[RMDB]
RNA sequence: GGGAACGACUCGAGUAGAGUCGAAAAUCUGGGGAGAAAAGGGUGGAUCGGCAGGGAAGAGUAAAUCCUACGGGAAUCCGUGGUUUCCCCUUAUGUCCAGCCCCUCCCCGGUCCUGGUGAAGGGGGAGCUAAUACUUAACUUCGGUUAAGUAUUAGCAAAAGAAACAACAACAACAAC
Reactivity to DMS in 0.01 (KOAc 150mM, MgCl2 10mM, bicine 150mM(pH8.5), 24C), signal-to-noise 5, nucleotides 027 to 126: u010c020u000g020g010g010g010a030g000a060a060a110a170g000g010g050u010g000g000a030u000c070g020g020c300a060g000g010g000a080a080g000a110g000u000a030a040a030u000c040c010u000a030c020g000g010g010a110a070u010c000c010g020u000g000g010u000u010u000c020c000c000c020u000u010a160u010g010u000c010c010a040g000c010c000c050c010u000c010c000c010c020g000g010u000c020c010u010g000g010u000g000a080a070g000g000g000g000g020a210
Reactivity to 2A3 in 0.01 (KOAc 150mM, MgCl2 10mM, bicine 150mM(pH8.5), 24C), signal-to-noise 4, nucleotides 027 to 126: u080c020u010g010g020g020g010a020g020a010a160a060a060g040g030g030u040g000g030a120u190c040g020g020c060a010g020g010g010a130a130g050a070g050u090a000a030a040u060c010c040u060a030c020g010g000g090a220a300u120c010c010g000u010g010g010u000u030u020c010c000c010c000u020u050a050u070g020u000c010c000a060g080c080c000c000c000u000c000c010c000c000g000g000u020c000c010u050g100g000u110g090a120a090g020g000g000g000g000a010